The record gives the reactivity of an RNA of 177 nucleotides to DMS and 2A3. Conditions: 150 mM KOAc, 10 mM MgCl2 and 150 mM bicine (pH 8.5), 24 C.

RNA sequence: GGGAACGACUCGAGUAGAGUCGAAAAGGCGUCCAGCUCUGAACAGGACUGAAAUGACCCUCGGUUCUCCCUGGAGCAGGGGAAGCGAUUGGCCUGGGGAGCUGGGAGAGGGGGAGGCAGAGUGGAAGCCUAAAGACUAUUUCGAUAGUCUUUAGGCAAAAGAAACAACAACAACAAC
Reactivity to DMS in 0.01 (KOAc 150mM, MgCl2 10mM, bicine 150mM(pH8.5), 24C), signal-to-noise 5, nucleotides 027 to 126: g020g020c100g000u000c010c010a050g010c020u010c020u010g010a130a150c080a030g020g000a100c060u000g010a040a080a080u010g000a200c070c040c090u010c030g000g000u000u000c020u010c030c020c050u000g010g020a130g030c090a100g000g000g010g010a040a030g010c030g000a080u000u000g010g010c010c010u010g030g000g010g010a020g020c040u000g000g000g000a050g010a100g010g000g000g010g000a090g000g010c090a090g010a130g000u010g000g010a120a130
Reactivity to 2A3 in 0.01 (KOAc 150mM, MgCl2 10mM, bicine 150mM(pH8.5), 24C), signal-to-noise 3, nucleotides 027 to 126: g050g020c050g030u040c000c020a020g000c020u040c010u040g080a180a060c010a060g030g050a120c040u080g050a110a130a100u180g130a110c010c030c000u000c010g040g010u040u000c090u110c010c000c030u090g100g060a110g120c040a020g000g000g000g030a010a020g100c030g030a060u030u120g030g010c010c020u030g000g020g040g000a010g050c060u060g020g050g010a020g020a020g010g020g010g010g000a030g000g000c070a030g030a020g090u080g000g050a050a040